[RMDB]
Structure probing data (DMS and 2A3) for a 170-nucleotide construct. The 2A3 profile rests on 2,105 reads. DMS adducts were read by reverse transcription with MarathonRT. For 2A3 the reverse transcriptase was SuperScript II with manganese. For DMS, 6,463 sequencing reads were counted. Source: RMDB library 15KLIB, as collected in RNAgym.
RNA sequence: GGGAACGACUCGAGUAGAGUCGAAAAGAACAGUUUAAGCACCUCGUGCCUCUUAUGCAUAAGGGGGCUGCGUGGCCUAUUGUUAGACGACGUAUAGUGCAAAUGUUGUCAGACACUUUAGACAAAUUAAGCACGUGCUUCGGCACGUGCAAAAGAAACAACAACAACAAC
Reactivity to DMS in 0.01 (KOAc 150mM, MgCl2 10mM, bicine 150mM(pH8.5), 24C), signal-to-noise 4, nucleotides 027 to 129: g030a160a110c110a020g000u040u030u000a070a240g090c070a130c000c080u040c060g050u010g000c020c080u010c020u050u040a050u040g150c230a100u020a070a060g000g000g000g000g000c020u040g000c040g000u030g030g020c270c000u010a030u020u080g000u000u000a030g030a080c060g010a020c060g050u070a000u030a000g030u000g050c050a090a140a030u040g040u000u040g020u040c030a180g030a200c280a010c070u010u090u000a170g000a050c090a000a000a000u030u000a120a040
Reactivity to 2A3 in 0.01 (KOAc 150mM, MgCl2 10mM, bicine 150mM(pH8.5), 24C), signal-to-noise 3, nucleotides 027 to 129: g060a000a000c010a010g000u020u030u080a070a020g070c020a070c030c020u000c030g020u010g000c040c020u020c040u090u060a090u220g050c020a030u060a080a070g030g000g010g000g100c030u030g000c000g030u040g040g010c120c000u130a100u050u120g080u040u150a000g000a000c060g010a000c000g040u030a070u020a090g130u090g020c000a000a030a080u010g100u200u070g000u010c000a000g090a090c040a010c030u110u130u050a030g000a010c000a040a170a100u140u080a050a030